Structure probing data (DMS and 2A3) for a 207-nucleotide construct. DMS adducts were read by reverse transcription with MarathonRT. Reactivities are given for positions 27 through 156. For DMS, 3,503 sequencing reads were counted. The 2A3 profile rests on 633 reads.

RNA sequence: GGGAACGACUCGAGUAGAGUCGAAAACUGGAAUACUGGCCUAUCUGAGACCUAAGAACCAUAGUGCCUGGAAUGCCUUCCGUAGGCUUUUGCUCCUGGGUGAAGCAAGACCUGCCUUGUUGAAUAGUCGAGGGGGUGGCUGGUGUUAGGCCGGGAGCAAUAUGCCGUCAUUCGUGACGGCAUAUUGAAAAGAAACAACAACAACAAC
Reactivity to DMS in 0.01 (KOAc 150mM, MgCl2 10mM, bicine 150mM(pH8.5), 24C), signal-to-noise 1, nucleotides 027 to 156: c070u000g000g010a220a110u000a130c050u000g040g000c000c000u000a110u000c110u010g000a210g020a060c030c010u020a090a110g010a050a100c030c080a040u000a160g050u000g000c030c010u000g020g030a090a050u020g000c000c050u000u000c030c080g010u010a030g040g000c020u000u000u000u000g020c010u000c010c000u020g060g020g040u000g000a110a040g040c010a030a040g030a030c000c000u030g000c030c040u030u000g000u030u000g030a090a210u000a080g010u010c090g030a140g010g000g020g040g020u000g010g020c000u000g020g000u000g010u000u000a040g020g020c020c010g000g000g000a090g010
Reactivity to 2A3 in 0.01 (KOAc 150mM, MgCl2 10mM, bicine 150mM(pH8.5), 24C), signal-to-noise 2, nucleotides 027 to 156: c040u000g090g070a180a060u050a110c030u030g060g000c040c000u040a050u010c040u160g100a080g050a190c060c030u080a220a100g010a170a050c040c000a010u030a030g130u050g050c000c020u030g000g050a050a010u090g040c020c040u030u040c050c010g090u070a040g000g070c070u050u090u100u060g040c010u040c000c070u040g090g020g000u080g100a050a030g010c040a030a000g040a080c040c000u100g070c100c000u000u020g040u070u040g060a160a270u140a190g190u090c030g010a060g000g030g010g030g000u050g000g030c030u010g030g030u050g020u060u030a030g060g000c020c000g100g000g000a030g030